RNA sequence: GGGAACGACUCGAGUAGAGUCGAAAAGAUAUGGAACAGCAAGUGAUGUUGCUAGAGGAACUACAUUUGCGGUCGGAAACGACCGACAAAUGCCUCUAGCAACAUCACGUAUGCUGUUCCUAAGUCAGACUAUAGUUACCUUCGGGUAACUAUAGUCAAAAGAAACAACAACAACAAC
Reactivity to DMS in 0.01 (KOAc 150mM, MgCl2 10mM, bicine 150mM(pH8.5), 24C), signal-to-noise 3, nucleotides 027 to 126: g000a050u010a300u010g020g010a010a020c000a010g020c010a050a180g010u000g000a030u000g000u000u000g010c000u000a000g010a000g010g010a140a030c080u020a300c010a000u000u000u000g010c010g000g000u000c000g010g000a180a140a230c020g020a020c020c010g000a070c000a000a010a000u000g000c000c000u010c000u000a010g010c010a010a000c000a000u000c010a000c010g040u010a050u000g000c000u010g010u000u010c000c000u000a010a070g010u000c060a210
Description: The record gives the reactivity of an RNA of 177 nucleotides to DMS. Values cover nucleotides 27 to 126. The reactions ran in a buffer of 150 mM KOAc, 10 mM MgCl2 and 150 mM bicine (pH 8.5), at 24 C.